Source information
Chemical mapping of a 207-nucleotide RNA with 2A3. It was measured as part of the RMDB library ARCHII. The RNA was probed in 150 mM KOAc, 10 mM MgCl2 and 150 mM bicine (pH 8.5) at 24 C. Values cover nucleotides 27 to 156.

RNA sequence: GGGAACGACUCGAGUAGAGUCGAAAAGAGUUGAUUAACACCAACUUGUGACCCAUGUGGGAGCAACAAAGGGAUGGAACAUGGCUGUGUCUUAACAGGUUGGGCUGUAGGGUACACUAAGCUGGCUUGCCCACUCCAAGUUGAGAGUUGGGCCAUGGUACGCGUGACACUUCGGUGUCACGCGUACAAAAGAAACAACAACAACAAC
Reactivity to 2A3 in 0.01 (KOAc 150mM, MgCl2 10mM, bicine 150mM(pH8.5), 24C), signal-to-noise 1, nucleotides 027 to 156: g020a000g020u060u020g020a050u120u070a130a060c000a010c000c000a020a010c000u030u040g070u120g040a130c000c000c020a020u040g090u060g010g020g000a010g090c030a020a040c050a040a210a020g070g000g000a020u020g070g020a040a040c000a040u020g110g000c030u000g020u020g020u230c070u030u080a060a050c010a010g030g000u030u000g010g000g040c030u030g090u060a040g030g000g000u040a030c040a000c100u180a000a130g040c030u010g030g100c010u040u150g010c010c000c000a010c000u010c020c020a090a140g090u050u140g090a110g000a000g030u120u120g000g000g000c010c000a050u090g020